This 177-nucleotide RNA was probed chemically with 2A3 and DMS. The data come from the RNA Mapping Database (RMDB), library OK2TST.

RNA sequence: GGGAACGACUCGAGUAGAGUCGAAAACAGGGACUGAGUUUCAGGAAUCGAACUGGCAAGUAUUGAAGCCAAAGUCUCAAAUUCACGCGCUCCUGACGCAAUCAUUUCAGGAUUCACUUUGGCAAGAACAAAUUGAUGGAUUCGUCCAUCAAUUUGUAAAAGAAACAACAACAACAAC
Reactivity to 2A3 in 0.01 (KOAc 150mM, MgCl2 10mM, bicine 150mM(pH8.5), 24C), signal-to-noise 6, nucleotides 027 to 126: c030a030g030g000g030a020c020u030g030a040g120u040u070u050c030a010g020g050a040a060u100c040g020a070a030c010u040g140g000c120a080a010g010u050a100u110u120g050a040a010g000c000c020a080a070a000g010u010c010u000c050a060a070a020u160u140c080a050c130g010c000g010c030u010c000c000u000g010a010c000g000c010a020a160u150c030a050u040u130u000c000a000g000g000a000u090u150c050a040c040u050u050u080g060g020c040a060a020g060a110
Reactivity to DMS in 0.01 (KOAc 150mM, MgCl2 10mM, bicine 150mM(pH8.5), 24C), signal-to-noise 7, nucleotides 027 to 126: c110a140g020g010g020a070c040u010g010a120g020u010u010u000c020a040g010g010a300a130u000c120g000a040a080c040u010g000g010c060a080a050g010u010a060u000u000g010a100a090g010c000c020a020a030a030g010u000c090u000c070a060a050a090u010u010c170a110c190g000c010g000c140u010c000c000u000g010a010c030g020c020a150a100u020c260a060u000u000u000c020a010g000g000a050u020u000c130a030c060u000u000u000g000g010c050a090a100g000a090
Annotation:
2A3 adducts were read by reverse transcription with SuperScript II with manganese.